[RMDB]
RNA sequence: GGGAACGACUCGAGUAGAGUCGAAAAUUAAGUUUUUGGUCUGAGGAAAGAGCAGCAUUACCUUGGUCAUUGACUAAAAUAAAGACAUAAUAAAGGUACUGGAAACUGAACAGAAGUAUGGAGUUUGUGAGUGAAGAGUUGGUCACACAGACAGCUCGUAGGAAAGCUGGUUCGCCAGCUUUCCUACAAAAGAAACAACAACAACAAC
Reactivity to 2A3 in 0.01 (KOAc 150mM, MgCl2 10mM, bicine 150mM(pH8.5), 24C), signal-to-noise 1, nucleotides 027 to 156: u130u060a030a000g060u130u000u020u020u090g030g030u050c010u020g010a030g000g040a110a010a100g060a000g070c040a000g000c000a010u040u070a050c000c000u000u070g020g000u030c040a030u010u100g120a050c120u140a010a000a240a000u210a010a070a100g040a000c020a000u160a080a010u110a140a150a030g030g000u000a020c010u050g070g010a020a060a050c030u080g000a020a040c010a070g050a090a020g080u020a040u100g040g020a090g010u020u200u090g000u060g000a040g010u090g020a060a110g000a020g030u010u010g000g060u030c000a090c000a010c010a080g020a000c010a030g100c000u070c060